[RMDB]
RNA sequence: GGGAACGACUCGAGUAGAGUCGAAAAUGCUAUCUAGAAGCUUUAGCGGGUAAUUUUUGAUAGCUUAGAUUAAAGAAUUGACGAAUCUAUAAUUGAAAUUUAGUCUUAGCUUAGCUAAACGCUUUGGGAAGUGAGCGAAGCUAAGUGAAACUCUCACCACUUGAUAAUGCUUCGGCAUUAUCAAGUGAAAAGAAACAACAACAACAAC
Reactivity to 2A3 in 0.01 (KOAc 150mM, MgCl2 10mM, bicine 150mM(pH8.5), 24C), signal-to-noise 4, nucleotides 027 to 156: u050g010c000u000a010u010c010u040a020g020a090a050g040c040u120u210u250a080g040c210g020g040g020u140a200a190u030u020u020u050u100g000a000u000a000g000c000u030u180a010g000a000u020u030a070a050a020g010a030a030u030u030g000a010c000g010a010a010u000c000u030a040u050a140a060u040u030g040a040a030a050u180u240u180a090g000u000c000u040u220a010g010c010u010u000a000g000c010u040a140a170a040c020g000c020u050u060u070g120g040g030a120a110g150u120g130a010g000c000g020a010a010g000c010u000a010a000g000u000g000a040a020a020c030u030c000u020c020a060c040